[RMDB]
RNA sequence: GGGAACGACUCGAGUAGAGUCGAAAAAGAUCGCCACGCACUUACGAGUGCGUGGCGAUCACGCGUGUUGCAGCGCGUCUAACAUAGGCAGGGCAACCUGCCGUUUGCUAAACGGAAGACAGAAAAAGAUGUUGUGAUAAUUCGUUAUCACAACAUCAAAAGAAACAACAACAACAAC
Reactivity to 2A3 in 0.01 (KOAc 150mM, MgCl2 10mM, bicine 150mM(pH8.5), 24C), signal-to-noise 2, nucleotides 027 to 126: a010g000a000u010c000g060c010c000a000c020g050c030a020c000u060u060a020c280g120a000g000u000g050c000g020u000g000g000c000g000a000u000c000a000c000g000c000g010u040g110u140u120g010c030a040g000c000g000c000g020u030c020u020a090a050c030a150u080a020g010g020c000a000g000g010g000c000a020a060c030c000u000g000c000c000g000u060u080u040g000c030u100a060a050a030c040g080g030a030a070g100a090c020a080g180a120a030a100a040a000
Reactivity to DMS in 0.01 (KOAc 150mM, MgCl2 10mM, bicine 150mM(pH8.5), 24C), signal-to-noise 3, nucleotides 027 to 126: a070g010a010u000c010g010c010c000a010c010g010c000a030c020u000u010a110c170g020a040g070u000g030c000g080u000g000g020c020g010a000u000c000a020c040g020c020g020u000g010u000u010g000c130a210g000c010g000c000g000u000c100u010a060a070c060a040u000a100g010g000c010a010g000g010g010c300a080a130c010c000u000g020c000c000g000u010u010u020g010c020u010a020a070a090c080g010g020a070a050g000a070c050a100g010a070a060a070a110a090

This 177-nucleotide RNA was probed chemically with 2A3 and DMS. Source: RMDB libraries RFM100 and RFMREP, as collected in RNAgym. 2A3 is a SHAPE reagent: it acylates the 2'-hydroxyl of flexible nucleotides of all four kinds. Values are in units of 0.01, from 0 to 300, in steps of 10.